[RMDB]
RNA sequence: GGGAACGACUCGAGUAGAGUCGAAAACUGAAUUGCUUACUCUAAUUAAAGGGAGAAAGGAAAGGGUGUCCAAUUCAAUAAUGGAAAGAUCUUUCAUAAUUGCCAUCAAAUGGAUGGUACAUGGAGUGGGAGGGUCGUCAAAUGACCAAAGCAUUAGGACACACAUGUGAUUCGUCACAUGUGUGUCAAAAGAAACAACAACAACAAC
Reactivity to 2A3 in 0.01 (KOAc 150mM, MgCl2 10mM, bicine 150mM(pH8.5), 24C), signal-to-noise 4, nucleotides 027 to 156: c070u030g010a040a070u140u070g040c010u080u060a090c010u030c040u130a150a200u240u120a160a160a080g040g020g020a060g030a080a070a010g050g030a080a030a020g020g000g000u030g030u000c040c000a010a020u060u080c040a080a080u090a160a060u160g020g020a040a030a020g080a080u030c040u020u020u020c030a010u040a150a130u110u090g000c020c000a010u010c030a130a100a300u210g140g010a020u010g000g000u000a020c030a020u090g000g000a080g090u070g000g000g030a150g000g010g000u000c020g010u020c020a040a110a100u160g010a020c040c000a040a030a000g090c050a060u210u170a030g040
Reactivity to DMS in 0.01 (KOAc 150mM, MgCl2 10mM, bicine 150mM(pH8.5), 24C), signal-to-noise 1, nucleotides 027 to 156: c060u020g000a050a130u000u000g000c030u000u010a060c020u000c040u000a160a150u000u000a070a140a120g010g020g050a110g000a140a100a150g000g010a070a060a050g000g010g050u040g080u000c030c000a020a160u000u000c080a080a120u000a090a120u000g010g000a040a050a130g000a130u000c050u000u000u000c030a040u020a080a080u000u000g020c000c010a020u020c000a120a070a200u020g030g050a020u020g010g000u010a000c100a020u000g000g000a060g030u000g020g000g000a160g000g040g020u000c020g020u000c060a030a050a110u020g000a120c020c000a010a070a140g010c040a070u000u000a170g010

About this RNA
An RNA of 207 nucleotides, treated with 2A3 and DMS and read out base by base. The RNA was probed in 150 mM KOAc, 10 mM MgCl2 and 150 mM bicine (pH 8.5) at 24 C.